RNA sequence: GGGAACGACUCGAGUAGAGUCGAAAAGCGUUGACGGCGGAUAUUGUGGAUUUGAUGCGCCAUUUCAUCAAUUUGCUCACUCUGAUUCAGCGCAAAAAUAAGUGUCGCAGCAUGCGCCGUCAUUGCGAGCGGCUAUAUGUUUCGACAUAUAGCCGCUAAAAGAAACAACAACAACAAC
Reactivity to 2A3 in 0.01 (KOAc 150mM, MgCl2 10mM, bicine 150mM(pH8.5), 24C), signal-to-noise 2, nucleotides 027 to 126: g000c010g010u010u000g010a000c000g000g000c010g060g030a020u030a030u030u090g080u050g030g070a040u050u080u140g060a030u040g000c000g000c000c000a030u070u060u040c040a100u030c010a040a140u080u040u160g040c040u070c050a120c060u080c070u040g080a140u180u090c060a010g020c000g020c000a000a050a010a000a000u140a050a040g020u020g060u120c040g000c000a010g100c000a010u050g100c010g020c000c000g000u010c010a000u040u060g010c000g010
Reactivity to DMS in 0.01 (KOAc 150mM, MgCl2 10mM, bicine 150mM(pH8.5), 24C), signal-to-noise 2, nucleotides 027 to 126: g030c020g020u000u000g020a020c030g040g010c000g010g000a040u000a010u020u000g060u000g010g000a140u000u000u000g000a170u000g010c070g010c000c090a170u000u020u000c080a090u000c110a070a070u000u000u000g010c090u030c150a060c140u000c140u020g000a070u000u010c290a070g020c070g000c030a000a030a060a120a150u020a000a090g000u000g000u000c010g000c000a000g020c060a020u000g000c000g010c000c020g020u000c000a000u010u010g000c000g000

About this RNA
Chemical mapping of a 177-nucleotide RNA with 2A3 and DMS. The reactions ran in a buffer of 150 mM KOAc, 10 mM MgCl2 and 150 mM bicine (pH 8.5), at 24 C. Source: RMDB library OK2TRN, as collected in RNAgym. For 2A3, 1,762 sequencing reads were counted. For 2A3 the reverse transcriptase was SuperScript II with manganese. Values cover nucleotides 27 to 126.